RNA sequence: GGGAACGACUCGAGUAGAGUCGAAAACACAGCCCUCGGACCGUGUAGCACCGCGUCCGGCCACCAGCCCACUGACGGUUGGUGAGCGGAUAAGGUCCUGAACAGAUGCCCUCCGGGCGUCCACGGCUUCCCUUUUAAUCUUCGGAUUAAAAGGGAAAAAAGAAACAACAACAACAAC
Reactivity to 2A3 in 0.01 (KOAc 150mM, MgCl2 10mM, bicine 150mM(pH8.5), 24C), signal-to-noise 6, nucleotides 027 to 126: c120a010c030a020g090c010c030c000u040c030g120g030a130c000c010g020u010g020u060a010g030c040a010c000c020g010c020g020u000c000c000g150g280c020c000a000c000c000a000g000c000c000c020a280c160u230g040a060c080g000g000u000u000g000g010u000g010a020g000c010g000g010a020u030a080a040g000g010u060c000c020u040g030a040a000c010a040g010a020u020g000c010c000c010u260c120c170g020g010g000c000g010u020c010c000a000c010g010g000c010
Reactivity to DMS in 0.01 (KOAc 150mM, MgCl2 10mM, bicine 150mM(pH8.5), 24C), signal-to-noise 7, nucleotides 027 to 126: c170a110c260a150g000c030c000c020u020c130g010g000a140c000c010g010u000g020u010a060g020c290a040c020c010g010c300g000u000c000c000g000g020c020c000a000c000c000a000g010c010c000c110a210c280u040g000a130c210g010g010u000u000g010g010u000g000a070g020c000g000g000a020u010a060a250g000g000u010c110c030u000g000a090a080c220a130g000a030u000g000c000c010c020u040c210c170g000g010g020c000g010u000c010c020a020c030g010g010c110